[RMDB]
RNA sequence: GGGAACGACUCGAGUAGAGUCGAAAAGAUAUGGAUAACGAACUACAUUGUGCAACGCGAUGAAAUCGGAAACGAUGGAGCGUUGUACAAUGCGUUAUCCUAAGUCAAAUCCAGCUUCGGCUGGAAACUAAUGGUAACUGUUCGCAGUUACCAUUAGAAAAGAAACAACAACAACAAC
Reactivity to 2A3 in 0.01 (KOAc 150mM, MgCl2 10mM, bicine 150mM(pH8.5), 24C), signal-to-noise 7, nucleotides 027 to 126: g040a020u090a040u140g010g000a010u010a010a000c010g010a040a020c070u180a030c300a010u000u010g000u000g000c000a000a010c000g040c020g290a300u060g020a020a040a000u010c000g000g050a060a050a050c020g010a010u010g010g020a020g000c000g010u000u000g000u000a000c000a000a000u000g000c000g000u000u000a000u000c000c000u000a060a010g010u000c020a020a010a210u020c010c010a010g000c000u060u120c240g210g000c010u010g000g020a050a010a000
Reactivity to DMS in 0.01 (KOAc 150mM, MgCl2 10mM, bicine 150mM(pH8.5), 24C), signal-to-noise 8, nucleotides 027 to 126: g010a040u000a300u000g010g010a010u000a000a000c000g010a090a050c090u010a300c010a000u000u000g010u010g000c010a010a010c000g020c010g000a110u010g000a050a100a010u000c000g010g000a120a070a150c000g000a010u000g000g000a070g010c000g010u000u000g010u000a000c000a000a000u000g000c000g010u000u000a000u000c000c000u000a030a090g010u010c030a070a100a120u000c000c000a010g000c000u000u010c210g020g010c000u000g000g000a020a030a140

Notes
Chemical mapping of a 177-nucleotide RNA with 2A3 and DMS. For DMS the reverse transcriptase was MarathonRT. For 2A3, 32,708 sequencing reads were counted.